[RMDB]
RNA sequence: GGGAACGACUCGAGUAGAGUCGAAAAGAUAUGGAUAAUUCAAGGGAGUUGGAUGUCGGAAACGACAUUUUAACAUCGAUCUUGAUUAUCCUAAGUCAAAACCUUCCUGUGUUCGCACAGGAAGGAAUCCCUAUAUAUUCUUCGGAAUAUAUAGGGAAAAAGAAACAACAACAACAAC
Reactivity to DMS in 0.01 (KOAc 150mM, MgCl2 10mM, bicine 150mM(pH8.5), 24C), signal-to-noise 4, nucleotides 027 to 126: g000a010u000a060u000g000g000a010u000a010a020u010u000c010a020a010g020g010g000a140g020u000u000g000g000a010u000g010u000c000g010g000a020a010a030c000g010a020c000a000u000u000u010u020a000a010c000a300u010c300g010a070u000c000u000u000g000a020u000u000a000u000c000c000u000a000a070g000u010c010a130a090a120a170c010c000u000u000c000c000u000g030u000g010u000u010c260g030c010a000c010a010g000g010a000a010g000g000a030a030
Reactivity to 2A3 in 0.01 (KOAc 150mM, MgCl2 10mM, bicine 150mM(pH8.5), 24C), signal-to-noise 4, nucleotides 027 to 126: g000a000u030a000u050g000g000a000u030a030a100u300u230c020a000a000g050g070g050a270g110u010u010g020g000a000u000g000u000c000g000g010a020a010a010c000g010a010c010a000u020u020u080u300a010a010c020a040u300c210g180a130u010c010u000u010g010a000u010u000a000u000c000c000u000a010a010g010u000c020a010a060a110a270c000c000u000u020c000c010u010g000u000g050u080u060c240g060c110a000c000a000g000g000a000a000g000g000a000a010